[RMDB]
RNA sequence: GGGAACGACUCGAGUAGAGUCGAAAAUGAGGUCUGGCUUCAAGCACUGUUUUGGUGUUGUGGCUGAUACUCUUGGGCAGUGUUUUGCACCUCUGAGAGUGGAGUAACUCCUCCUGUGGAGUUGGUCGUUCCAAUGUCUCUUCGGAGACAUUGGAACAAAAGAAACAACAACAACAAC
Reactivity to DMS in 0.01 (KOAc 150mM, MgCl2 10mM, bicine 150mM(pH8.5), 24C), signal-to-noise 2, nucleotides 027 to 126: u040g010a020g010g020u010c050u030g010g000c000u000u020c080a070a050g000c000a010c020u030g050u010u000u010u020g000g000u000g030u000u000g000u000g000g030c010u020g030a150u000a030c000u000c020u030u000g010g000g030c170a110g000u020g030u000u030u020u080g030c050a040c020c050u000c000u000g030a050g010a010g000u000g010g000a070g000u010a000a050c000u000c030c020u020c260c130u030g010u040g010g000a060g010u000u000g010g000u010c040
Reactivity to 2A3 in 0.01 (KOAc 150mM, MgCl2 10mM, bicine 150mM(pH8.5), 24C), signal-to-noise 2, nucleotides 027 to 126: u150g000a000g030g030u050c010u080g060g000c000u000u000c000a020a000g050c020a020c030u010g190u300u180u280u300g000g010u000g000u000u000g020u020g040g010c000u010g020a030u140a190c000u020c000u000u000g010g000g000c110a100g000u000g030u120u190u190u300g000c000a000c020c040u050c020u040g010a060g000a000g100u100g000g000a060g020u030a000a070c000u000c000c000u050c020c110u080g130u300g060g000a020g000u020u040g000g020u080c080